Description: The record gives the reactivity of an RNA of 177 nucleotides to DMS and 2A3. For 2A3 the reverse transcriptase was SuperScript II with manganese.
RNA sequence: GGGAACGACUCGAGUAGAGUCGAAAAGAGGAAAUAGUGUCUAGGAGCGCGCCGAGUAAACAUAUAUGGUUCAUAUAUAACCGUAGGCACGUAAAGAAAGCGAGUAAGGCAGAGAGAACUGCCAGAAAUGAUGGUGCAUGUUCGCAUGCACCAUCAUAAAAGAAACAACAACAACAAC
Reactivity to DMS in 0.01 (KOAc 150mM, MgCl2 10mM, bicine 150mM(pH8.5), 24C), signal-to-noise 2, nucleotides 027 to 126: g050a120g030g000a130a090a050u010a060g030u000g010u000c030u000a100g050g030a150g060c000g000c060g010c020c070g000a220g010u020a100a140a060c100a040u030a040u000a020u000g000g030u020u020c090a050u010a020u020a040u000a060a080c000c030g000u000a050g000g010c000a020c060g000u010a050a070a080g000a040a070a050g000c070g000a090g000u000a110a100g010g020c000a010g000a070g000a190g000a100a080c010u000g000c000c000a070g020a050a050
Reactivity to 2A3 in 0.01 (KOAc 150mM, MgCl2 10mM, bicine 150mM(pH8.5), 24C), signal-to-noise 3, nucleotides 027 to 126: g030a000g060g140a000a100a000u200a120g050u040g040u000c000u000a020g030g120a150g030c020g010c000g010c010c000g030a000g050u200a040a150a010c090a000u030a010u010a010u050g200g010u090u140c080a010u000a000u020a000u000a140a070c010c030g020u020a040g020g000c010a000c040g000u060a020a020a010g100a060a000a000g040c010g010a030g140u150a090a120g030g000c010a000g040a000g010a000g040a100a020c030u020g000c000c010a000g000a000a110